[RMDB]
RNA sequence: GGGAACGACUCGAGUAGAGUCGAAAAACGGCAAUAGCAUUAGCUUCAAGUUUUAUUGAUACAGAUGAACACCAUCCAAUUAGCCGCUCAAUGUCGGUAAUGUAUUGGUCGCAUAACGAAGAUAUUGACCCCUCCAUAUAUUCGUAUAUGGAGGGGUAAAAGAAACAACAACAACAAC
Reactivity to DMS in 0.01 (KOAc 150mM, MgCl2 10mM, bicine 150mM(pH8.5), 24C), signal-to-noise 6, nucleotides 027 to 126: a130c040g010g020c060a070a040u010a060g020c030a110u010u000a060g020c030u000u000c040a080a080g010u010u010u020u030a050u010u010g010a080u010a090c180a130g000a060u000g000a150a090c160a080c080c040a050u020c040c060a060a080u020u020a090g000c040c020g020c090u020c150a050a070u010g010u010c030g000g030u020a030a050u020g000u020a050u020u000g010g000u010c060g020c060a050u010a070a120c090g000a060a070g010a040u020a050u000u010g010
Reactivity to 2A3 in 0.01 (KOAc 150mM, MgCl2 10mM, bicine 150mM(pH8.5), 24C), signal-to-noise 7, nucleotides 027 to 126: a010c030g020g000c040a050a060u090a120g020c040a050u150u050a020g030c030u050u060c060a110a110g030u030u060u090u110a090u040u090g030a030u050a180c090a110g050a050u050g040a130a020c050a050c080c000a020u040c010c000a010a020u060u050a050g060c010c020g030c030u030c070a090a140u130g090u160c020g000g060u110a090a020u090g040u080a080u040u100g080g010u030c060g000c120a060u060a150a000c040g030a090a040g050a120u130a090u100u170g020
Overview
The record gives the reactivity of an RNA of 177 nucleotides to DMS and 2A3. DMS adducts were read by reverse transcription with MarathonRT. The DMS profile rests on 12,805 reads. The RNA was probed in 150 mM KOAc, 10 mM MgCl2 and 150 mM bicine (pH 8.5) at 24 C.